[RMDB]
RNA sequence: GGGAACGACUCGAGUAGAGUCGAAAAAAUGAUGACAUAAUCUGCACCGCGAUAGACUUCUUUGUCCGUUGUGGCAGUUAACUGCAACUUAUUGCUCACCAAGUGUUGCUCAAUAAGCUCAUCGGCGAUGGGCGAGCGCCCGGCAUUGACCAUUGCCAAUCGGUGUGGUUUUCGAACCACACCGAUUAAAAGAAACAACAACAACAAC
Reactivity to 2A3 in 0.01 (KOAc 150mM, MgCl2 10mM, bicine 150mM(pH8.5), 24C), signal-to-noise 1, nucleotides 027 to 156: a000a000u110g030a010u000g000a030c010a090u250a040a130u020c000u000g010c030a020c000c040g010c000g100a140u040a110g010a010c040u010u110c060u190u300u240g020u000c010c000g000u040u040g010u050g100g070c010a000g040u090u030a160a030c000u040g040c060a030a000c000u070u050a010u010u090g020c040u050c010a090c030c040a140a080g020u100g060u300u100g040c010u000c050a090a110u100a080a000g040c080u010c060a040u020c030g040g000c080g010a030u050g000g020g080c000g000a010g000c010g070c040c010c070g040g030c020a080u000u080g030a000c000c000a000u030u000g030c020c000

Chemical mapping of a 207-nucleotide RNA with 2A3. For 2A3 the reverse transcriptase was SuperScript II with manganese. The reactions ran in a buffer of 150 mM KOAc, 10 mM MgCl2 and 150 mM bicine (pH 8.5), at 24 C.